[RMDB]
RNA sequence: GGGAACGACUCGAGUAGAGUCGAAAAUCGGCACACUCCCAUGAAAGGGGGUGUUGCUGUAUGACAGUAUUUGAAGGAAUUUCCCUUAUGUUGACGUUUGGGCUUCUGAUCGUUGCAAUGCUGUCAUUCGUGACUAUAUGUUCGCAUAUAGUCACGAAAAAGAAACAACAACAACAAC
Reactivity to DMS in 0.01 (KOAc 150mM, MgCl2 10mM, bicine 150mM(pH8.5), 24C), signal-to-noise 3, nucleotides 027 to 126: u000c020g010g010c000a030c000a000c000u000c000c000c000a120u010g010a080a170a150g010g010g010g010g000u000g000u000u000g030c000u000g010u000a030u000g010a010c000a010g020u000a020u000u010u000g030a130a200g000g010a110a130u000u000u000c030c000c000u000u000a080u000g020u000u010g000a040c050g020u000u000u000g000g020g000c300u000u010c010u010g000a030u000c020g010u000u000g000c050a040a070u000g000c000u000g000u000c000a040u000
Reactivity to 2A3 in 0.01 (KOAc 150mM, MgCl2 10mM, bicine 150mM(pH8.5), 24C), signal-to-noise 2, nucleotides 027 to 126: u040c010g000g000c000a000c000a010c000u010c000c060c000a030u250g190a120a110a130g000g010g000g000g010u020g010u020u120g000c000u000g000u020a000u020g000a000c000a000g010u020a070u040u150u200g150a080a050g060g070a050a110u070u070u110c000c000c000u000u040a110u060g120u100u100g050a030c010g000u020u010u000g020g030g060c160u300u120c010u150g050a110u030c030g000u030u040g020c010a010a010u030g000c010u000g000u010c010a020u030